[RMDB]
This 177-nucleotide RNA was probed chemically with 2A3 and DMS.
RNA sequence: GGGAACGACUCGAGUAGAGUCGAAAACAGUGCAUGUCGUAGGCUUGCACUUGCAUGGGUUUGCAUGACCCGGGAGAUGAACCCACCAUUGUCUUCCUCUUAUGCUUGGAUUGAAGGGAGCUCUACACACAUUCCGUGUAUUCGUACACGGAAUGUGAAAAGAAACAACAACAACAAC
Reactivity to 2A3 in 0.01 (KOAc 150mM, MgCl2 10mM, bicine 150mM(pH8.5), 24C), signal-to-noise 9, nucleotides 027 to 126: c040a010g000u010g000c000a010u020g030u120c080g190u150a090g060g040c000u000u010g000c000a000c010u040u050g020c030a090u060g020g000g000u020u020u110g090c040a040u120g020a020c000c000c000g000g020g000a160g010a050u150g040a060a090c010c000c010a010c020c040a090u050u110g040u060c000u020u020c010c010u030c020u070u090a040u100g040c030u060u100g120g030a140u060u120g060a050a040g000g010g010a020g000c010u010c020u050a080c120a000
Reactivity to DMS in 0.01 (KOAc 150mM, MgCl2 10mM, bicine 150mM(pH8.5), 24C), signal-to-noise 5, nucleotides 027 to 126: c120a010g020u000g010c000a020u010g010u000c040g010u040a090g010g030c030u000u000g000c000a010c020u000u020g030c130a080u030g000g000g020u000u000u010g020c080a060u000g000a060c020c010c010g010g020g010a060g000a060u000g010a060a140c010c010c010a120c100c110a120u020u000g020u010c030u000u000c000c010u020c080u010u020a050u010g000c090u000u020g010g010a110u000u000g020a080a120g000g010g000a060g010c050u010c030u010a110c160a240

2A3 adducts were read by reverse transcription with SuperScript II with manganese.